An RNA of 207 nucleotides, treated with DMS and 2A3 and read out base by base. For DMS the reverse transcriptase was MarathonRT. The 2A3 profile rests on 5,189 reads.
RNA sequence: GGGAACGACUCGAGUAGAGUCGAAAAGGCAUCGGCGUGCCGGUAUGCCUGGUUCUGAUGGCACUUCCGCUGUUGGUCCCGUGGAACGUGGUCGGCACGAUCUGGCAGGUGUUCGGCCGCAACGACAUCGGUUUGUUCGGCUACUACGUCAAUGCCAUGAAGGAAAUGUAUUCGUACAUUUCCUUCAAAAAGAAACAACAACAACAAC
Reactivity to DMS in 0.01 (KOAc 150mM, MgCl2 10mM, bicine 150mM(pH8.5), 24C), signal-to-noise 3, nucleotides 027 to 156: g020g030c000a020u000c020g020g020c200g020u010g000c030c030g030g020u000a040u010g000c010c010u000g020g030u000u010c050u000g010a130u020g020g030c030a120c070u000u010c080c050g030c050u000g020u010u000g010g010u000c040c010c020g030u000g010g010a090a080c150g000u000g010g040u000c030g030g010c000a070c020g010a060u000c050u000g020g020c030a100g020g030u000g010u010u010c010g030g000c000c080g010c140a060a060c020g010a060c030a120u010c060g020g020u010u010u020g010u000u000c040g020g020c050u000a090c040u000a070c020g000u000c030a060a080u010g030c010c010a230
Reactivity to 2A3 in 0.01 (KOAc 150mM, MgCl2 10mM, bicine 150mM(pH8.5), 24C), signal-to-noise 5, nucleotides 027 to 156: g000g000c000a000u010c030g020g000c030g040u020g010c040c000g010g010u120a080u100g020c010c030u070g040g020u140u090c070u100g100a100u100g010g020c020a010c040u120u030c040c070g000c030u000g010u050u030g050g040u050c000c020c020g020u090g020g030a140a100c090g010u030g000g060u050c020g010g010c020a010c060g030a080u070c110u110g110g010c020a070g010g120u030g020u160u300c020g030g000c040c030g010c040a010a030c020g020a010c000a050u110c110g040g020u030u040u130g040u080u080c010g010g000c010u110a080c050u050a010c090g010u010c020a030a030u040g000c010c010a010
Values are in units of 0.01, from 0 to 300, in steps of 10. The reactions ran in a buffer of 150 mM KOAc, 10 mM MgCl2 and 150 mM bicine (pH 8.5), at 24 C. It was measured as part of the RMDB library OK3TST.